[RMDB]
Overview:
Structure probing data (DMS and 2A3) for a 207-nucleotide construct. For 2A3, 1,044 sequencing reads were counted. For DMS, 1,238 sequencing reads were counted. The reactions ran in a buffer of 150 mM KOAc, 10 mM MgCl2 and 150 mM bicine (pH 8.5), at 24 C.

RNA sequence: GGGAACGACUCGAGUAGAGUCGAAAAAAGAGUAACUAUUGACUUAAUAGGCAUCAUUUAUUUAGUAUUAAAUGACGACCGUACCAGUGACAGAUAUACAAAACGACUUAAUUACAGAGUUUUCAGAAGAUAAUUAUCCAUCUAACAAAAAUUAUGAGAAAAUAACGUAAUUCGUUACGUUAUUUUCAAAAGAAACAACAACAACAAC
Reactivity to DMS in 0.01 (KOAc 150mM, MgCl2 10mM, bicine 150mM(pH8.5), 24C), signal-to-noise 1, nucleotides 027 to 156: a060a110g000a160g000u050a120a120c030u000a130u000u000g010a270c080u000u000a050a130u030a200g010g070c030a080u040c010a070u000u010u000a030u000u000u000a140g040u040a120u030u000a000a070a000u000g050a010c030g000a280c000c030g050u000a160c040c080a070g020u010g000a070c100a100g010a000u000a210u000a180c040a040a090a090a140c130g000a010c000u000u000a000a070u000u010a040c040a130g000a210g010u030u000u000u000c040a060g000a100a130g030a120u000a030a040u000u010a110u010c070c030a040u010c030u000a080a210c040a030a070a200a050a140u000u010a160u000g000a300
Reactivity to 2A3 in 0.01 (KOAc 150mM, MgCl2 10mM, bicine 150mM(pH8.5), 24C), signal-to-noise 2, nucleotides 027 to 156: a000a000g120a030g050u020a050a060c060u060a110u160u110g090a020c020u060u150a100a060u050a170g010g000c010a020u000c000a000u000u000u100a070u050u110u110a100g040u110a150u170u050a050a010a010u010g010a000c070g040a020c000c040g030u020a060c040c000a050g030u010g080a010c010a070g070a070u090a010u010a120c060a010a030a050a010c010g060a000c000u010u080a040a050u130u020a040c030a030g100a040g050u010u040u010u200c050a020g010a100a000g010a090u080a120a030u140u060a020u050c040c000a010u000c060u110a100a040c040a070a050a050a090a030u230u300a120u230g020a070